[RMDB]
RNA sequence: GGGAACGACUCGAGUAGAGUCGAAAAUCGUGGCGGAAUGGUAGACGCGCUAGACUUAGGAUCUAGUUUCAUUGCGGAGUGGGGGUUCAAGUCCCUUCGAGUGCACCAAGUUUUAGCGUUUGCUGAACACCCUUGGAGAGUUCGCUCUCCAAGGGUGAAAAGAAACAACAACAACAAC
Reactivity to DMS in 0.01 (KOAc 150mM, MgCl2 10mM, bicine 150mM(pH8.5), 24C), signal-to-noise 3, nucleotides 027 to 126: u010c090g030u000g000g000c030g020g010a070a080u000g000g010u000a030g010a090c080g020c080g010c080u010a030g010a030c030u000u010a110g020g000a130u010c080u000a090g010u000u000u000c070a110u010u010g020c060g000g000a080g020u020g000g000g000g020g000u000u000c240a080a220g000u010c010c020c040u000u000c060g010a130g020u010g000c110a140c070c020a050a060g000u020u000u000u000a080g020c050g000u010u010u020g020c020u010g000a070a210
Reactivity to 2A3 in 0.01 (KOAc 150mM, MgCl2 10mM, bicine 150mM(pH8.5), 24C), signal-to-noise 1, nucleotides 027 to 126: u090c000g020u040g060g060c060g030g040a140a070u090g010g040u040a000g020a130c010g020c000g000c010u010a020g000a000c000u090u180a100g040g080a060u020c040u090a040g000u070u110u140c090a090u090u250g100c030g030g010a030g030u130g000g010g010g020g010u030u090c030a060a010g110u000c000c010c040u000u010c000g010a000g000u050g020c010a060c010c020a040a040g020u020u030u030u060a030g010c070g010u140u130u230g000c000u010g010a030a030
This 177-nucleotide RNA was probed chemically with DMS and 2A3.